Chemical mapping of a 207-nucleotide RNA with DMS and 2A3. Values cover nucleotides 27 to 156. For 2A3, 3,219 sequencing reads were counted. The reactions ran in a buffer of 150 mM KOAc, 10 mM MgCl2 and 150 mM bicine (pH 8.5), at 24 C. 2A3 adducts were read by reverse transcription with SuperScript II with manganese.
RNA sequence: GGGAACGACUCGAGUAGAGUCGAAAACGCACUCGCAGCUUAAUAACCUGCGCUGAGCCCUUCUCCCCCAGCUUGCCUGUGUCCUAGGGAAUUGAAAGGUCAUCCUUCACAGGAUCGUGUGGAAGUCAUUACUCGUGAGUGUUCGCACUCACGAGAACAUUAAACUGGUGUUCGCACCAGUUUAAUGAAAAGAAACAACAACAACAAC
Reactivity to DMS in 0.01 (KOAc 150mM, MgCl2 10mM, bicine 150mM(pH8.5), 24C), signal-to-noise 4, nucleotides 027 to 156: c060g030c040a080c040u010c020g000c020a030g020c030u030u010a140a150u000a100a110c230c000u000g000c010g010c140u000g000a080g020c000c010c040u000u000c050u000c010c010c010c020c030a110g000c060u000u010g010c030c030u020g010u010g010u000c050c040u000a100g010g020g010a070a140u000u000g010a040a060a090g010g020u000c070a120u000c000c020u000u000c060a090c080a070g000g020a040u000c070g010u000g040u000g000g000a070a270g020u000c040a110u000u000a140c000u010c000g030u010g000a020g030u000g030u010u010c300g020c020a020c000u000c000a010c000g000a010g000a040a120
Reactivity to 2A3 in 0.01 (KOAc 150mM, MgCl2 10mM, bicine 150mM(pH8.5), 24C), signal-to-noise 4, nucleotides 027 to 156: c040g000c010a060c030u030c000g020c000a000g020c020u060u050a020a010u050a050a050c010c010u040g020c020g000c190u050g030a040g010c030c010c000u110u090c110u040c010c010c000c000c010a010g010c000u050u140g040c010c020u010g010u000g020u060c010c040u050a040g000g000g060a040a060u050u100g070a090a080a040g100g010u080c030a050u080c000c010u030u040c010a040c020a040g010g050a050u110c040g040u030g010u050g080g030a020a070g040u040c030a080u060u110a080c010u000c000g000u000g000a000g000u010g020u040u040c080g050c040a000c000u010c000a000c000g000a000g000a000a010